[RMDB]
This 177-nucleotide RNA was probed chemically with DMS and 2A3. For 2A3, 3,482 sequencing reads were counted.

RNA sequence: GGGAACGACUCGAGUAGAGUCGAAAAUGCAAGAUGGUGCUAAGGUGAGAUGUAGUGUAACUGCCACUAUAACAAUGAAGGCAGGAGUAAUCGGGGGGGAAUCAUGCUUCAUGAUCAAGGGUCCUUCCCUAUCCGUAGGUUUCGACCUACGGAUAGGAAAAGAAACAACAACAACAAC
Reactivity to DMS in 0.01 (KOAc 150mM, MgCl2 10mM, bicine 150mM(pH8.5), 24C), signal-to-noise 5, nucleotides 027 to 126: u000g010c060a060a080g010a100u000g010g010u000g000c060u010a060a090g020g010u010g010a060g020a120u000g010u010a030g020u000g000u000a070a190c050u000g010c050c000a100c090u000a060u010a090a100c250a080a090u010g010a070a100g020g000c030a020g000g010a110g010u000a070a050u010c090g020g000g000g000g000g000g010a090a050u000c030a030u000g000c120u000u000c040a040u000g000a040u000c150a050a080g000g000g000u000c020c050u000u000c050
Reactivity to 2A3 in 0.01 (KOAc 150mM, MgCl2 10mM, bicine 150mM(pH8.5), 24C), signal-to-noise 3, nucleotides 027 to 126: u080g010c010a040a020g040a110u100g010g060u070g020c020u060a070a070g020g020u050g040a070g010a060u080g000u070a050g030u030g030u090a060a050c030u010g010c020c010a020c020u030a030u040a230a070c110a090a110u190g040a110a110g020g010c010a010g050g020a010g020u110a080a110u080c060g000g000g000g000g000g000g000a020a030u070c020a000u030g030c070u090u130c020a010u040g030a010u040c050a030a030g010g000g020u020c000c000u000u060c030

The RNA was probed in 150 mM KOAc, 10 mM MgCl2 and 150 mM bicine (pH 8.5) at 24 C.